Chemical mapping of a 207-nucleotide RNA with DMS and 2A3. For 2A3, 3,283 sequencing reads were counted.
RNA sequence: GGGAACGACUCGAGUAGAGUCGAAAAGUUUAAAUCAACUCAUUAAGGAGGAUGCCCUUGGGUAUUCUGCUUCUUGACCUGGUACCUCUAUUGCAGGGUACUGGUGUUUUCUUCGGUACUGGAUUCCGUUUGUAUGGAAUCUAAACCAUAGUUAUGACAACGAAUAUAUCUUCGGAUAUAUUCGUUGAAAAGAAACAACAACAACAAC
Reactivity to DMS in 0.01 (KOAc 150mM, MgCl2 10mM, bicine 150mM(pH8.5), 24C), signal-to-noise 2, nucleotides 027 to 156: g010u000u010u000a080a080a090u000c080a030a090c000u000c030a080u000u000a070a070g010g010a040g010g010a040u000g000c010c000c070u000u010g040g050g040u000a020u010u000c030u000g000c010u000u000c000u000u000g000a040c010c020u010g010g010u000a050c010c000u010c040u010a140u010u000g020c170a070g020g010g020u000a020c020u000g010g010u000g000u000u000u010u010c030u000u000c040g020g040u000a100c180u000g010g000a020u000u000c000c020g030u000u000u010g030u000a070u000g010g000a040a030u000c000u000a020a070a020c020c010a100u000a110g010u000u000a080u010g010a280
Reactivity to 2A3 in 0.01 (KOAc 150mM, MgCl2 10mM, bicine 150mM(pH8.5), 24C), signal-to-noise 5, nucleotides 027 to 156: g010u030u060u090a050a070a050u170c050a040a040c020u010c020a030u020u050a020a020g040g010a000g010g010a040u010g000c000c030c000u090u230g130g000g000u000a010u000u030c020u060g150c000u040u010c010u030u030g000a010c010c010u020g000g000u010a010c000c000u070c040u230a210u250u300g120c150a050g000g010g020u010a010c000u000g010g020u050g010u070u080u050u020c010u060u120c090g020g000u050a070c100u070g020g000a000u000u000c000c010g050u030u140u150g260u140a120u140g010g000a000a000u000c000u000a060a000a000c010c000a030u070a080g060u100u080a110u200g040a040

It was measured as part of the RMDB library PDB130.